[RMDB]
RNA sequence: GGGAACGACUCGAGUAGAGUCGAAAAACAUAGGCCAUGCUUACGAGCAUGGCCUACGACGAAUCUCAAGCAAUCAAGCAUUCUACUUCUAUUGCAACACUGAGGAGCUUACGAGCUCCUCAGUGAAAAAAGAGAGUAAUGUUCGCAUUACUCUCAAGUUCCUUUUCUACUUCGGUAGAAAAGGAACAAAAGAAACAACAACAACAAC
Reactivity to 2A3 in 0.01 (KOAc 150mM, MgCl2 10mM, bicine 150mM(pH8.5), 24C), signal-to-noise 1, nucleotides 027 to 156: a000c030a020u000a010g000g000c000c000a000u010g090c010u140u110a080c260g100a020g000c000a000u010g030g000c000c000u000a020c010g030a000c020g040a050a100u010c010u010c030a020a050g000c000a040a040u090c020a070a000g030c040a200u080u100c080u090a130c000u160u020c030u100a100u040u050g020c060a000a060c000a060c000u000g000a010g020g000a000g000c000u070u060a110c230g050a010g000c000u060c000c000u000c000a010g000u000g000a000a000a000a000a000a000g020a000g010a000g010u000a010a000u030g060u110u060c120g000c110a000u000u000a000c000u000c010u000c000a000a000
Background: This 207-nucleotide RNA was probed chemically with 2A3. As a SHAPE reagent, 2A3 marks flexible, mostly unpaired nucleotides at the ribose 2'-OH. Conditions: 150 mM KOAc, 10 mM MgCl2 and 150 mM bicine (pH 8.5), 24 C.